[RMDB]
RNA sequence: GGGAACGACUCGAGUAGAGUCGAAAAGAUAUGGACAUUCAGUAACAGCAACAGCCUAUAUCGGAAACGAUAUAGGACAUGCUGACUGGUGUCCUAAGUCAAACAGAUGCUACUUCGGUAGCAUCUGCUGAUAUCCAAAGUUCGCUUUGGAUAUCAGAAAAGAAACAACAACAACAAC
Reactivity to DMS in 0.01 (KOAc 150mM, MgCl2 10mM, bicine 150mM(pH8.5), 24C), signal-to-noise 8, nucleotides 027 to 126: g000a030u000a300u010g000g000a020c000a010u000u020c010a000g020u000a220a160c140a020g020c010a050a120c250a200g010c010c000u000a000u000a000u010c000g010g000a060a050a150c000g000a010u000a000u000a000g000g010a010c060a140u010g020c000u000g020a100c000u000g000g020u000g000u000c000c000u000a010a070g000u000c030a090a090a270c010a000g000a010u000g010c000u000a020c000u000u010c230g030g010u000a000g000c000a000u000c000u000g010
Reactivity to 2A3 in 0.01 (KOAc 150mM, MgCl2 10mM, bicine 150mM(pH8.5), 24C), signal-to-noise 9, nucleotides 027 to 126: g010a010u060a030u090g000g000a010c020a020u250u210c020a300g040u160a300a260c030a140g040c090a050a110c030a280g010c030c000u010a010u010a000u000c000g000g000a040a030a010c000g000a010u000a000u000a010g000g010a000c000a030u080g000c000u000g020a010c000u010g000g000u000g000u000c000c000u000a020a010g020u010c030a090a060a080c010a010g000a010u000g020c000u000a010c010u060u200c300g150g000u000a000g000c000a000u000c000u000g000